[RMDB]
RNA sequence: GGGAACGACUCGAGUAGAGUCGAAAACUCCUGAUGUACCUUGGCACUGAGUAAAGUCUUGGGUACCUAGGGAAAGGUGAAGGAGCUAGACUCCUUACCAAGUACUUAGGGGGUGGAGAGUAGUAGGUAUUGAAGUGAGCUUCGGCUCACUUCAAUAAAAAGAAACAACAACAACAAC
Reactivity to 2A3 in 0.01 (KOAc 150mM, MgCl2 10mM, bicine 150mM(pH8.5), 24C), signal-to-noise 3, nucleotides 027 to 126: c010u010c010c010u040g060a040u110g030u040a030c000c010u020u030g020g000c110a030c080u080g060a100g200u290a120a130a000g000u030c000u020u050g010g000g020u020a010c000c000u000a020g020g010g000a000a000a020g050g030u070g200a050a000g010g000a000g000c040u130a030g050a300c000u020c000c000u000u000a030c000c000a000a010g030u000a000c000u000u030a000g000g020g000g000g000u060g020g060a050g000a000g040u090a010g020u050a030g080g030
Reactivity to DMS in 0.01 (KOAc 150mM, MgCl2 10mM, bicine 150mM(pH8.5), 24C), signal-to-noise 3, nucleotides 027 to 126: c040u010c000c000u000g010a160u020g010u000a010c000c040u010u000g020g010c100a050c030u030g010a170g020u000a070a160a100g000u010c000u010u010g010g010g060u040a030c000c030u010a020g020g000g000a060a190a220g000g000u000g030a000a020g000g020a020g030c020u060a140g020a210c000u000c000c000u000u000a010c000c010a010a030g010u000a090c000u000u000a040g000g010g000g010g000u000g000g000a120g010a140g000u000a040g010u010a000g010g010

This 177-nucleotide RNA was probed chemically with 2A3 and DMS. The RNA was probed in 150 mM KOAc, 10 mM MgCl2 and 150 mM bicine (pH 8.5) at 24 C. The 2A3 profile rests on 1,482 reads.